[RMDB]
RNA sequence: GGGAACGACUCGAGUAGAGUCGAAAAGUGCGGAUUGAAAUUCAUAGGAGCCUCACCAUUAUGGCUGAACGCCGCGGUACUCCGCGUAGUCGCGACGUAAACGUUCUGUGUUCGCGUUCAGGCCUCACACCCUGGAUAGUUUCGACUAUCCAGGGUGAAAAGAAACAACAACAACAAC
Reactivity to DMS in 0.01 (KOAc 150mM, MgCl2 10mM, bicine 150mM(pH8.5), 24C), signal-to-noise 3, nucleotides 027 to 126: g020u000g010c070g020g000a130u000u020g000a080a070a060u000u010c100a080u010a150g020g000a110g030c040c010u000c040a120c080c050a100u020u020a030u000g000g020c040u010g000a080a030c010g000c020c040g010c000g010g010u010a080c110u000c140c140g020c020g000u000a040g000u010c060g030c030g000a050c040g010u000a080a080a130c100g000u000u000c060u000g000u000g020u000u000c060g000c020g010u000u000c030a040g030g000c010c020u000c160a230
Reactivity to 2A3 in 0.01 (KOAc 150mM, MgCl2 10mM, bicine 150mM(pH8.5), 24C), signal-to-noise 1, nucleotides 027 to 126: g040u060g000c010g030g030a090u070u110g090a150a030a050u190u060c040a030u090a050g110g080a030g010c020c010u030c010a050c000c010a020u180u070a060u300g000g010c020u010g000a030a000c020g000c010c000g000c000g010g000u060a100c030u020c060c080g020c040g030u050a070g160u080c040g000c000g010a030c040g040u060a000a240a000c040g000u150u000c020u100g070u020g070u260u160c040g000c000g020u000u000c050a050g010g180c000c000u000c000a040